[RMDB]
RNA sequence: GGGAACGACUCGAGUAGAGUCGAAAACAGGCACACCAAAUGAAAAAUUGGUGACAACCUCCACGGCGCCUGAUUUUGUAGCAUUUAAUGUCUUUCAGGGCAUUGAAACGGCUGUUGGCCAUUAUGUACGACUCCGGGUUCGCCCGGAGUAAAAGAAACAACAACAACAAC
Reactivity to 2A3 in 0.01 (KOAc 150mM, MgCl2 10mM, bicine 150mM(pH8.5), 24C), signal-to-noise 3, nucleotides 027 to 129: c000a040g000g020c040a020c000a000c110c030a050a000a030u150g090a020a050a050a030a000u030u000g030g020u030g030a000c050a050a090c020c000u080c060c080a150c080g020g000c000g020c000c000u030g120a190u020u050u100u200g210u050a020g090c010a020u000u000u030a010a020u010g010u010c030u030u300u070c170a060g000g120g000c000a000u000u000g070a010a000a000c080g030g000c020u010g060u130u100g150g000c000c010a000u160u050a100u190g040u010a030c050g040
Reactivity to DMS in 0.01 (KOAc 150mM, MgCl2 10mM, bicine 150mM(pH8.5), 24C), signal-to-noise 5, nucleotides 027 to 129: c090a000g000g030c020a300c000a020c030c010a000a010a070u050g000a080a090a040a210a060u010u030g010g010u020g050a110c200a110a160c000c100u050c090c030a080c100g050g010c200g010c050c010u000g010a120u020u040u000u030g010u000a060g070c040a110u000u000u000a070a020u010g020u010c020u000u050u060c170a130g000g000g050c050a020u000u000g000a010a060a040c190g040g020c010u030g000u000u040g010g030c000c070a080u100u020a040u060g000u030a050c100g000
An RNA of 170 nucleotides, treated with 2A3 and DMS and read out base by base. The 2A3 profile rests on 4,374 reads. Conditions: 150 mM KOAc, 10 mM MgCl2 and 150 mM bicine (pH 8.5), 24 C. 2A3 is a SHAPE reagent: it acylates the 2'-hydroxyl of flexible nucleotides of all four kinds.